[RMDB]
RNA sequence: GGGAACGACUCGAGUAGAGUCGAAAACAAACACCAGCGCCCAGGAAGAAAAACCAAAACGUGAACUACUUGACGAAACACGAACGCUGGUGUAAAUCGUCAAGUAACAAAAACAAAACAAACAAAACAUGUCGAUAGUCUUCGGACUAUCGACAUGAAAAGAAACAACAACAACAAC
Reactivity to 2A3 in 0.01 (KOAc 150mM, MgCl2 10mM, bicine 150mM(pH8.5), 24C), signal-to-noise 2, nucleotides 027 to 126: c010a000a090a000c000a020c020c010a000g000c000g030c010c000c010a010g200g050a150a110g090a020a090a090a080a040c110c040a020a030a000a090c060g040u070g080a070a060c020u000a010c000u040u000g000a000c010g010a090a060a060c050a000c010g040a120a050c000g000c010u030g040g040u000g000u000a000a050a000u050c000g000u000c000a000a000g000u000a010a020c030a030a000a000a030a000c140a000a050a050a000c080a050a030a080c100a010a120a000a000